[RMDB]
RNA sequence: GGGAACGACUCGAGUAGAGUCGAAAACCAUGCCGACCCGAAGAGGAAGAAGAGGACAUGGACGCGAACCGUGAGUGGAACCCUCGAUCCUUUAUUGGGGGGUACACUCGAGGAGUGGAAGGCGGGUGGAUACUGAUUAGUUCGCUAAUCAGUAUCCAAAAGAAACAACAACAACAAC
Reactivity to 2A3 in 0.01 (KOAc 150mM, MgCl2 10mM, bicine 150mM(pH8.5), 24C), signal-to-noise 3, nucleotides 027 to 126: c020c000a020u070g040c000c000g040a060c010c000c030g070a090a050g040a080g130g010a050a050g040a050a030g050a070g020g010a020c020a020u050g030g000a030c030g000c040g060a050a020c000c030g040u040g060a010g000u010g000g020a090a030c000c010c000u000c000g020a040u110c000c120u160u300u190a030u070u040g010g000g000g010g020g020u050a010c000a000c000u010c000g000a030g010g010a050g020u080g020g020a070a030g030g050c060g020g010g030u030
Reactivity to DMS in 0.01 (KOAc 150mM, MgCl2 10mM, bicine 150mM(pH8.5), 24C), signal-to-noise 3, nucleotides 027 to 126: c030c010a120u020g000c040c050g000a160c050c010c020g010a120a050g000a130g000g000a080a060g010a060a040g010a100g000g030a100c060a050u010g020g010a130c100g010c020g010a040a080c040c010g010u010g010a020g010u000g010g010a150a250c000c000c010u000c020g010a030u020c260c200u010u000u020a030u020u000g010g010g000g000g000g020u020a090c000a020c010u000c010g010a030g000g000a090g000u020g000g010a070a070g000g020c030g020g010g000u000

Structure probing data (2A3 and DMS) for a 177-nucleotide construct. The 2A3 profile rests on 2,937 reads. The reactions ran in a buffer of 150 mM KOAc, 10 mM MgCl2 and 150 mM bicine (pH 8.5), at 24 C.